[RMDB]
RNA sequence: GGGAACGACUCGAGUAGAGUCGAAAAGGCUGUAAACAAUGCUCGCUAGGUAUGUCACGCGCCAUGAGCACGUGAUGUGCCGUAGGGAAGACGAUAAGCGAGCCGCCUGGGAAGUACGUCUGCAAGGGCUAAACGAGAUGUUCGCAUCUCGUUUAGCAAAAGAAACAACAACAACAAC
Reactivity to DMS in 0.01 (KOAc 150mM, MgCl2 10mM, bicine 150mM(pH8.5), 24C), signal-to-noise 2, nucleotides 027 to 126: g020g000c020u010g030u020a090a060a140c090a050a130u010g010c000u000c000g000c000u020a110g020g030u060a000u000g050u000c000a000c030g020c030g020c010c010a110u010g020a270g030c000a010c000g040u010g000a020u000g040u000g010c000c000g020u000a060g000g000g010a120a090g000a090c030g000a200u020a050a180g020c010g010a000g020c000c140g000c030c010u000g000g000g010a110a110g010u000a030c030g010u000c000u000g020c130a060a040g020g010
Reactivity to 2A3 in 0.01 (KOAc 150mM, MgCl2 10mM, bicine 150mM(pH8.5), 24C), signal-to-noise 1, nucleotides 027 to 126: g050g000c050u030g090u180a050a090a020c030a010a210u110g030c000u020c000g000c020u050a010g000g010u000a020u000g010u000c020a000c000g000c000g010c010c020a190u230g070a000g060c020a000c000g000u000g000a010u000g000u000g000c000c000g010u020a030g070g030g030a060a030g110a020c050g030a060u040a140a050g000c000g030a000g010c000c000g020c000c000u020g000g040g000a110a040g030u070a030c050g020u010c040u030g020c020a050a110g090g050